[RMDB]
RNA sequence: GGGAACGACUCGAGUAGAGUCGAAAACGCAUAUUUGCCAAAAUGACAAAGAGAAUGAGGUCGUGCCAAGUAAUUGCAGAAUCAUUGCUGGCCAAUCAUGCAGGUAAAUUAAUGAGAGAGAAUGGAGUCCGAACUGAAAUUUCGAUUUCAGUUCGGAAAAAGAAACAACAACAACAAC
Reactivity to 2A3 in 0.01 (KOAc 150mM, MgCl2 10mM, bicine 150mM(pH8.5), 24C), signal-to-noise 4, nucleotides 027 to 126: c040g030c030a040u030a020u080u000u100g000c020c010a010a090a080a140u110g030a080c070a050a150a000g120a020g080a070a100u130g040a060g090g110u100c070g060u070g040c050c050a130a050g040u140a120a220u110u100g010c010a010g090a080a000u040c060a030u020u080g080c050u020g020g010c020c000a010a040u020c020a020u040g000c050a050g030g110u110a080a080a060u090u130a080a080u090g040a040g010a010g000a000g030a070a090u070g090g010a020g100
Reactivity to DMS in 0.01 (KOAc 150mM, MgCl2 10mM, bicine 150mM(pH8.5), 24C), signal-to-noise 3, nucleotides 027 to 126: c100g000c090a070u010a040u010u000u010g000c000c010a060a090a150a040u030g000a040c110a140a080a060g040a090g000a030a010u000g000a080g010g060u000c050g020u040g000c030c110a030a070g040u030a050a080u020u030g010c080a090g030a110a100u010c040a020u000u000g000c050u000g010g000c080c080a080a050u000c040a020u020g010c090a090g000g010u010a010a030a030u000u050a060a100u010g000a070g010a090g020a050g010a090a030u010g000g020a130g020